[RMDB]
RNA sequence: GGGAACGACUCGAGUAGAGUCGAAAAGAUAUGGAAGCACGGCCAGGUCCUCGAAGAACGAGCUCGGAAACGAGCUCGGGAGAGGCUGGUUGCUUCCUAAGUCAAAACGGGCUGUUCGCAGCCCGAAGAACAUUCCACAGUUCGCUGUGGAAUGUUCAAAAGAAACAACAACAACAAC
Reactivity to 2A3 in 0.01 (KOAc 150mM, MgCl2 10mM, bicine 150mM(pH8.5), 24C), signal-to-noise 1, nucleotides 027 to 126: g030a020u140a040u190g010g000a000a000g000c090a020c300g100g000c030c000a060g020g300u280c000c030u000c030g140a300a010g000a060a030c020g020a000g000c000u000c030g040g070a070a070a030c030g040a040g000c000u000c000g030g030g000a050g000a010g010g000c000u000g000g030u020u010g000c000u000u000c000c000u030a090a010g060u060c030a000a020a000a280c040g000g000g000c040u090g020u230u140c300g020c230a000g000c010c050c000g000a000a010
Reactivity to DMS in 0.01 (KOAc 150mM, MgCl2 10mM, bicine 150mM(pH8.5), 24C), signal-to-noise 1, nucleotides 027 to 126: g000a010u000a300u000g010g000a020a020g000c000a060c300g030g000c010c010a030g000g030u000c010c000u000c000g020a150a150g000a170a260c010g000a020g010c000u000c010g010g000a050a140a110c000g000a030g010c000u000c000g010g030g000a060g000a030g030g020c010u020g000g020u010u000g010c000u020u000c000c000u000a000a070g000u010c020a030a050a130a180c060g000g000g060c010u000g010u000u050c240g010c010a030g000c000c020c010g010a000a030